[RMDB]
RNA sequence: GGGAACGACUCGAGUAGAGUCGAAAAGAAACAAUUAAUGUCAAUCUGCGCGCAUAAGCAGAACUUGUGACUAAUUGAAGUAUUAAGAAGUAGGGAGCAUGUGAGCAAUGAAAUUACCAAUUUAUUUACAGGGAUAUGAUUUCGAUCAUAUCCCUGUAAAAGAAACAACAACAACAAC
Reactivity to 2A3 in 0.01 (KOAc 150mM, MgCl2 10mM, bicine 150mM(pH8.5), 24C), signal-to-noise 2, nucleotides 027 to 126: g140a000a060a000c000a000a010u010u010a090a100u160g000u070c000a000a080u000c000u000g030c030g000c000g000c060a130u020a300a060g000c000a030g000a000a030c010u130u210g210u120g050a000c060u010a020a010u000u000g020a010a000g120u060a050u190u000a140a050g070a050a000g080u040a010g010g000g070a010g000c090a010u030g010u020g050a050g040c030a000a010u130g120a060a000a070u190u180a050c000c000a060a060u140u150u150a030u010u000u000
Reactivity to DMS in 0.01 (KOAc 150mM, MgCl2 10mM, bicine 150mM(pH8.5), 24C), signal-to-noise 1, nucleotides 027 to 126: g000a180a100a200c030a010a030u000u010a040a050u000g000u030c050a040a130u000c050u010g000c020g000c300g080c290a090u070a060a110g000c020a020g000a010a200c200u060u030g020u000g000a100c000u000a010a000u000u000g030a030a000g010u000a060u000u000a000a160g000a020a040g040u000a040g000g000g000a010g010c130a030u000g000u000g000a030g040c030a050a040u000g010a030a040a130u030u030a100c050c060a060a090u000u010u010a020u000u000u000
Record summary:
Chemical mapping of a 177-nucleotide RNA with 2A3 and DMS. It was measured as part of the RMDB libraries RFM100 and RFMREP. The RNA was probed in 150 mM KOAc, 10 mM MgCl2 and 150 mM bicine (pH 8.5) at 24 C.